[RMDB]
RNA sequence: GGGAACGACUCGAGUAGAGUCGAAAACGCACGGUUCGCCGUGCGAAAACGUAUGUUUGUCCACGAUAGGCCCCGGAAACUUAUUGUUUGUCAAACAGAAGAAAAAAUAGUGCGUUUCGACGCACUAGUUUGGGAAUAGGUUCGCCUAUUCCCAAACAAAAGAAACAACAACAACAAC
Reactivity to 2A3 in 0.01 (KOAc 150mM, MgCl2 10mM, bicine 150mM(pH8.5), 24C), signal-to-noise 2, nucleotides 027 to 126: c010g000c000a000c000g000g050u050u050c140g020c110c010g010u010g020c000g020a000a010a000a010c010g100u150a060u120g010u000u000u020g040u000c000c010a020c010g000a020u020a040g020g040c020c070c080c100g090g080a050a040a020c000u020u010a030u010u080g070u030u060u230g040u020c010a000a010a020c010a020g100a110a020g120a080a110a030a040a010a040u080a010g000u010g000c010g050u000u040u120c180g030a000c010g000c000a000c000u010a020
Reactivity to DMS in 0.01 (KOAc 150mM, MgCl2 10mM, bicine 150mM(pH8.5), 24C), signal-to-noise 3, nucleotides 027 to 126: c020g010c010a000c020g000g000u000u020c220g020c010c000g060u000g010c000g000a030a010a060a120c110g000u000a120u030g010u000u000u010g020u000c030c300a070c030g000a050u000a050g030g020c020c030c010c210g000g000a080a090a040c010u000u000a050u000u000g010u000u010u000g010u000c040a030a010a040c060a020g020a100a170g020a010a050a070a060a050a100u000a000g010u000g010c000g000u000u000u000c200g020a050c000g010c000a000c000u000a000
Structure probing data (2A3 and DMS) for a 177-nucleotide construct. Source: RMDB library RFMREP, as collected in RNAgym. Conditions: 150 mM KOAc, 10 mM MgCl2 and 150 mM bicine (pH 8.5), 24 C. Reactivities are given for positions 27 through 126. 2A3 adducts were read by reverse transcription with SuperScript II with manganese.